[RMDB]
An RNA of 177 nucleotides, treated with DMS and 2A3 and read out base by base.
RNA sequence: GGGAACGACUCGAGUAGAGUCGAAAAAUGUAGCCAUUACCGGUGAACGCCACCGGAUCUCCGAGCUGGGGCUUACCCAGCUGCAUGCCGUCGGCGCGCCAAGCCGAGACGCUGGUGGUCUUGACCAGAAGAGCAACUUGUUCGCAAGUUGCUCUUCAAAAGAAACAACAACAACAAC
Reactivity to DMS in 0.01 (KOAc 150mM, MgCl2 10mM, bicine 150mM(pH8.5), 24C), signal-to-noise 2, nucleotides 027 to 126: a060u010g000u000a090g010c040c010a030u010u000a090c150c090g010g010u000g020a050a060c300g020c050c000a000c020c000g000g000a120u000c030u000c020c220g010a070g050c000u000g010g000g000g010c240u050u060a060c000c000c000a000g020c000u040g000c050a060u040g040c000c040g010u000c100g010g000c060g010c050g060c040c170a090a090g000c010c020g000a070g020a010c070g030c000u000g040g000u000g000g000u030c200u020u000g000a050c090c020a150
Reactivity to 2A3 in 0.01 (KOAc 150mM, MgCl2 10mM, bicine 150mM(pH8.5), 24C), signal-to-noise 3, nucleotides 027 to 126: a000u130g020u060a020g020c010c010a030u050u130a140c030c030g000g000u040g020a160a040c040g090c040c000a020c010c010g010g000a020u020c020u030c050c050g050a000g000c000u010g000g010g020g000c080u080u160a150c000c000c020a000g000c010u000g020c010a000u100g020c010c030g200u160c050g040g000c010g030c040g040c070c040a100a020g000c000c030g030a040g000a000c100g000c050u000g030g030u010g000g000u010c030u030u080g040a070c000c000a030

2A3 adducts were read by reverse transcription with SuperScript II with manganese.